[RMDB]
An RNA of 207 nucleotides, treated with 2A3 and DMS and read out base by base.
Conditions: 150 mM KOAc, 10 mM MgCl2 and 150 mM bicine (pH 8.5), 24 C.
2A3 adducts were read by reverse transcription with SuperScript II with manganese.
For DMS, 2,069 sequencing reads were counted.

RNA sequence: GGGAACGACUCGAGUAGAGUCGAAAAAGACCAGAACUACGGGAUGAUUAAUGGUGGCGAGAAGUUUUGGAUCGCUGACCUUACUCACGUCCAUAUUGGAAGCGGCCGUGAGAGCAAAAGGGGUCAUCUUACAUAACUGCCUCCCCAGAAGCAUGCAGUAAUAGGGACAGUUCGCUGUCCCUAUUACAAAAGAAACAACAACAACAAC
Reactivity to 2A3 in 0.01 (KOAc 150mM, MgCl2 10mM, bicine 150mM(pH8.5), 24C), signal-to-noise 3, nucleotides 027 to 156: a000g060a050c030c020a040g070a110a050c080u190a030c090g080g000g010a040u060g030a040u080u180a160a070u070g050g010u010g040g000c030g020a000g020a050a100g040u050u030u090u060g050g010a050u080c020g000c050u010g040a040c000c000u010u010a050c000u000c000a000c000g010u000c000c000a060u090a110u160u270g090g040a100a020g080c120g040g000c000c010g000u000g000a000g000a000g010c060a020a110a060a080g010g000g000g020u000c000a000u010c000u020u130a080c010a040u100a050a010c020u030g040c010c000u040c020c030c000c000a000g010a050a000g040c020a030u090g010c020a000
Reactivity to DMS in 0.01 (KOAc 150mM, MgCl2 10mM, bicine 150mM(pH8.5), 24C), signal-to-noise 2, nucleotides 027 to 156: a070g010a140c050c010a110g010a120a010c080u000a070c050g000g010g000a130u000g000a100u000u010a090a160u010g000g010u000g020g040c030g010a060g010a300a030g030u000u000u020u010g020g000a250u010c010g060c060u000g060a040c020c020u000u000a130c010u000c000a020c000g000u010c020c020a090u000a230u010u000g000g010a160a220g000c080g030g010c080c010g000u010g000a020g000a090g030c060a010a020a100a260g010g020g010g010u010c020a060u000c060u000u000a060c020a030u020a110a060c030u000g010c030c000u010c000c020c020c030a130g010a090a140g050c030a050u000g030c020a080